[RMDB]
RNA sequence: GGGAACGACUCGAGUAGAGUCGAAAAUUAAAAGCUUGUUGUUACGUGGGUGUGCAAACUGUUGAAGAUCUGCGUGCUCGCAUGACAUAUGUAUGCCAGUGUGGUGGUGAACGUCAUCGGCAAUUAGGGGCUAACUGGUUCGCCAGUUAGAAAAGAAACAACAACAACAAC
Reactivity to 2A3 in 0.01 (KOAc 150mM, MgCl2 10mM, bicine 150mM(pH8.5), 24C), signal-to-noise 4, nucleotides 027 to 129: u190u140a000a050a010a020g080c090u030u030g010u010u030g010u010u030a030c060g010u020g010g000g000u060g000u010g030c010a030a050a030c030u040g130u140u180g100a080a030g020a130u040c010u050g000c020g050u020g010c040u010c040g000c010a020u060g010a010c000a030u140a040u160g080u050a050u110g030c020c020a030g030u050g020u040g150g040u010g000g030u060g050a080a010c020g010u030c020a030u030c020g010g000c020a000a030u080u070a110g020g000g000g000
Reactivity to DMS in 0.01 (KOAc 150mM, MgCl2 10mM, bicine 150mM(pH8.5), 24C), signal-to-noise 8, nucleotides 027 to 129: u060u080a030a090a090a110g040c160u010u020g000u000u000g000u000u000a050c100g050u000g020g000g010u000g030u030g000c040a010a000a040c080u010g000u050u060g040a150a050g000a060u010c070u030g020c000g010u020g040c050u000c000g000c050a060u000g010a040c050a070u050a030u020g000u040a060u040g000c040c050a070g000u030g020u030g030g050u030g020g030u050g030a070a080c080g030u040c040a050u000c070g000g000c090a040a060u000u000a060g000g020g010g030
This 170-nucleotide RNA was probed chemically with 2A3 and DMS. The reactions ran in a buffer of 150 mM KOAc, 10 mM MgCl2 and 150 mM bicine (pH 8.5), at 24 C.